The data come from the RNA Mapping Database (RMDB), library OK2TST. Structure probing data (2A3 and DMS) for a 177-nucleotide construct. For DMS, 2,301 sequencing reads were counted.
[RMDB]
RNA sequence: GGGAACGACUCGAGUAGAGUCGAAAAGUCAGAAGUGCGGCCAGUGCUUCCUCGCGGAAUGUGCCGCGAUCGACCAGCUUGAAAUUGUCGAUAUAGACACCUUCCUGCUCGAUAUUGACGGCAAGCAAAAUUAUACCCCGUUCGCGGGGUAUAAUUUAAAAGAAACAACAACAACAAC
Reactivity to 2A3 in 0.01 (KOAc 150mM, MgCl2 10mM, bicine 150mM(pH8.5), 24C), signal-to-noise 2, nucleotides 027 to 126: g020u020c040a060g030a110a040g110u060g090c060g000g080c060c020a070g030u080g080c010u000u040c000c000u030c030g040c050g060g080a110a080u150g080u150g080c000c000g020c000g000a010u010c020g030a020c020c000a020g030c030u070u040g050a140a180a210u180u130g020u000c010g030a030u000a030u050a220g040a020c020a020c040c050u050u060c000c060u020g000c020u050c010g020a030u020a040u110u070g030a030c000g000g040c040a050a010g040c000a000
Reactivity to DMS in 0.01 (KOAc 150mM, MgCl2 10mM, bicine 150mM(pH8.5), 24C), signal-to-noise 3, nucleotides 027 to 126: g010u000c050a090g000a070a070g030u000g000c020g010g020c040c080a150g010u010g000c160u000u000c010c020u010c160g020c200g030g000a130a070u010g010u010g030c020c010g020c030g020a010u000c030g020a070c060c110a110g000c130u020u020g000a040a090a070u010u010g010u000c010g010a060u010a120u010a090g000a040c030a070c160c120u000u000c070c070u000g000c160u010c020g010a060u000a040u010u010g000a040c010g000g040c060a030a050g000c100a080
DMS adducts were read by reverse transcription with MarathonRT. Reactivities are given for positions 27 through 126.